[RMDB]
RNA sequence: GGGAACGACUCGAGUAGAGUCGAAAACAGGACUUCGGUCCUGCAGUUAGGGGUCAUCUCGAGCGAAAGGCAACAGCGUACUGAAGCCUCCACGGUACGACAUGCCUUAAGCGAUGAGAGAUGACGGAGGCACCCGCAAUCCGCUAUUCGUAGCGAAAGAUGUAUCAAACUUCGGUUUGAUACAUCUAAAAGAAACAACAACAACAAC
Reactivity to 2A3 in 0.01 (KOAc 150mM, MgCl2 10mM, bicine 150mM(pH8.5), 24C), signal-to-noise 7, nucleotides 027 to 156: c000a010g010g010a000c010u090u150c300g140g010u000c000c000u000g000c030a020g020u070u240a150g000g060g070g000u010c010a010u010c010u000c010g030a040g010c040g060a170a090a020g020g000c010a060a060c060a250g140c010g000u000a000c000u020g040a140a020g010c000c010u000c010c010a020c010g000g000u000a010c010g120a090c050a100u100g000c000c000u030u070a090a040g040c030g080a170u180g090a050g000a000g000a010u000g000a010c000g000g000a010g000g000c010a040c010c010c000g030c030a030a090u080c080c010g000c000u020a030u070u100c220g120u060a010g000c010g040a180a090
Reactivity to DMS in 0.01 (KOAc 150mM, MgCl2 10mM, bicine 150mM(pH8.5), 24C), signal-to-noise 3, nucleotides 027 to 156: c000a010g000g000a050c010u000u010c290g050g010u000c000c010u000g000c000a070g030u000u010a070g020g000g060g030u000c020a080u010c000u000c010g000a180g010c000g010a240a050a060g010g010c000a040a140c100a190g010c020g020u000a020c010u000g000a070a120g010c010c000u000c010c020a260c020g010g000u000a010c010g000a080c070a300u000g000c010c000u000u000a020a300g000c030g010a130u020g020a280g010a070g000a030u000g000a020c010g010g000a030g050g060c030a270c040c000c020g030c130a090a170u010c030c000g030c000u010a040u000u010c230g030u010a040g020c000g020a070a090